This 177-nucleotide RNA was probed chemically with DMS.
The data come from the RNA Mapping Database (RMDB), library TTRDES.
Reactivities are rounded to 0.1 and cut off at 0 and 3.
The DMS profile rests on 1,226 reads.

RNA sequence: GGGAACGACUCGAGUAGAGUCGAAAAAAAAAGAUAUGGAGCCUAACGAACUUGGAUUUAUACAGCUAAUGGAUCGGAAACGAUCCAUGACGCUGUAUUGUCAGUUCGAGGGCUCCUAAGUCAAAAACAUUAAAAAUCAGUUCGCUGAUUUUUAAUGAAAAGAAACAACAACAACAAC
Reactivity to DMS in 0.01 (KOAc 150mM, MgCl2 10mM, bicine 150mM(pH8.5), 24C), signal-to-noise 2, nucleotides 027 to 126: a030a080a100a050a100g000a020u000a300u010g000g020a000g020c020c000u000a140a160c040g000a000a000c000u010u020g040g010a000u000u010u000a010u000a000c000a000g000c010u010a300a000u000g000g000a000u000c000g010g000a130a080a230c020g040a010u000c000c000a000u000g000a170c250g000c000u000g020u000a000u000u010g010u000c010a010g010u000u000c010g040a300g000g020g000c010u000c000c000u000a000a090g010u040c060a070a100a110a100a120